[RMDB]
RNA sequence: GGGAACGACUCGAGUAGAGUCGAAAAAGGGACACCUCACUCACAUUUUACCAACAGAGUGAGAGUGAGGUUAACCUCUCAUUUCUGUUGGUGAACGCAGAAGUUAGAGGUUUAGAACACUGACAACUGCGUUCAUAGUUGUGAGUGUUCUCUCCCACGACUCAUGAAUGUUCGCAUUCAUGAGUCGAAAAGAAACAACAACAACAAC
Reactivity to 2A3 in 0.01 (KOAc 150mM, MgCl2 10mM, bicine 150mM(pH8.5), 24C), signal-to-noise 2, nucleotides 027 to 156: a000g020g000g000a020c040a050c020c030u000c010a020c010u110c010a040c020a050u100u240u150u300a040c030c010a020a030c020a020g010a040g000u030g000a020g010a000g020u140g040a110g050g020u090u050a010a010c030c000u000c000u010c000a040u100u300u040c010u000g000u020u030g030g110u070g010a040a000c020g000c010a000g000a070a000g010u010u000a070g050a100g180g000u030u000u050a010g010a040a040c020a000c000u050g020a000c000a060a010c010u040g000c030g100u070u070c020a020u050a040g070u030u080g000u000g030a000g010u010g000u010u020c000u010c010u010c020c010c000a020